[RMDB]
RNA sequence: GGGAACGACUCGAGUAGAGUCGAAAAAUGUGGUAUAUUCAUAUCAUACUAUAUGAACAGUAAGAAUUAGUAGUCUUAUUGAGACUAGAACUCAUAGGGAAUCAAAUCGAUUUAUGGAUGGAAUCAGCUCUAACAACAGUUUCGACUGUUGUUAGAGAAAAGAAACAACAACAACAAC
Reactivity to DMS in 0.01 (KOAc 150mM, MgCl2 10mM, bicine 150mM(pH8.5), 24C), signal-to-noise 5, nucleotides 027 to 126: a050u010g020u000g000g000u000a010u010a050u010u020c130a110u020a050u010c070a070u000a040c020u000a050u000a030u010g000a080a060c040a040g000u000a030a030g000a060a040u030u030a090g010u030a090g000u000c000u000u010a030u010u010g010a040g010a210c040u000a060g010a100a090c110u010c070a050u020a060g010g020g000a050a040u010c070a060a050a110u020c150g000a050u010u010u030a070u020g000g040a050u020g000g000a060a120u020c060a080g000
Reactivity to 2A3 in 0.01 (KOAc 150mM, MgCl2 10mM, bicine 150mM(pH8.5), 24C), signal-to-noise 7, nucleotides 027 to 126: a020u120g020u050g000g040u040a060u040a020u080u160c070a010u040a040u080c050a050u030a090c050u090a040u020a040u150g130a120a030c030a040g070u150a110a030g040a110a060u120u080a060g120u060a030g030u030c020u020u100a130u080u160g020a040g020a010c020u050a050g080a130a050c030u030c050a030u070a050g070g000g090a030a040u070c030a080a070a160u150c100g020a010u040u040u090a090u110g090g020a050u030g040g060a060a040u040c020a030g050